[RMDB]
RNA sequence: GGGAACGACUCGAGUAGAGUCGAAAACCGGCGUUUGGGGAAGGGGAGGAAGAGUAGUGGCUGUCCGCCUUCGCGUCCCGUCCCGGAUGGCGGUCCUGCCGGGGCCGGCGGCCCGCGCAACGGCUUUAUGCUGCUAUACCUUCGGGUAUAGCAGCAUAAAAGAAACAACAACAACAAC
Reactivity to 2A3 in 0.01 (KOAc 150mM, MgCl2 10mM, bicine 150mM(pH8.5), 24C), signal-to-noise 2, nucleotides 027 to 126: c000c010g040g040c000g010u020u060u060g060g000g010g010a060a130g110g050g010g000a010g010g020a030a050g070a030g070u190a020g020u030g090g000c110u120g090u170c010c010g020c000c060u050u080c080g090c010g170u110c010c000c000g050u070c020c000c020g040g010a070u040g000g140c000g000g010u010c000c000u000g000c000c010g030g000g000g010c020c000g000g030c050g020g000c000c050c000g000c070g000c030a030a050c020g000g000c000u000u030u000
This 177-nucleotide RNA was probed chemically with 2A3. Source: RMDB library OK1LIB, as collected in RNAgym. 2A3 is a SHAPE reagent: it acylates the 2'-hydroxyl of flexible nucleotides of all four kinds. Values cover nucleotides 27 to 126.